[RMDB]
An RNA of 207 nucleotides, treated with 2A3 and read out base by base. The 2A3 profile rests on 413 reads. The reactions ran in a buffer of 150 mM KOAc, 10 mM MgCl2 and 150 mM bicine (pH 8.5), at 24 C. Values cover nucleotides 27 to 156.

RNA sequence: GGGAACGACUCGAGUAGAGUCGAAAAGUAAAAUCUAGCAAUUAUUGAGCACUAUGACAUGUCAGGCAUGAAACCAGGUACUUUUUAUAUGCUACUGCAGAAUCUAAGUAGACAUAGAGGCAAGAUAACAAUAGAGUCAUAAAACAAUAUGAAACUGUCUCGGUUCUAAGUUCGCUUAGAACCGAGAAAAAGAAACAACAACAACAAC
Reactivity to 2A3 in 0.01 (KOAc 150mM, MgCl2 10mM, bicine 150mM(pH8.5), 24C), signal-to-noise 1, nucleotides 027 to 156: g070u080a020a040a000a130u040c100u040a020g090c040a120a100u110u000a140u040u190g030a030g020c000a020c070u070a050u070g050a040c000a030u010g020u070c020a020g060g020c000a040u040g090a080a000a090c050c040a000g080g030u000a010c040u190u280u020u060u090a070u020a000u070g030c000u000a030c030u090g080c020a020g020a270a000u070c020u000a050a040g030u010a000g050a000c010a000u080a030g020a000g010g070c000a050a000g050a090u120a040a020c010a000a080u100a070g010a000g010u080c000a000u050a030a100a000a000c060a070a000u160a030u300g020a200a010a040c060u000g000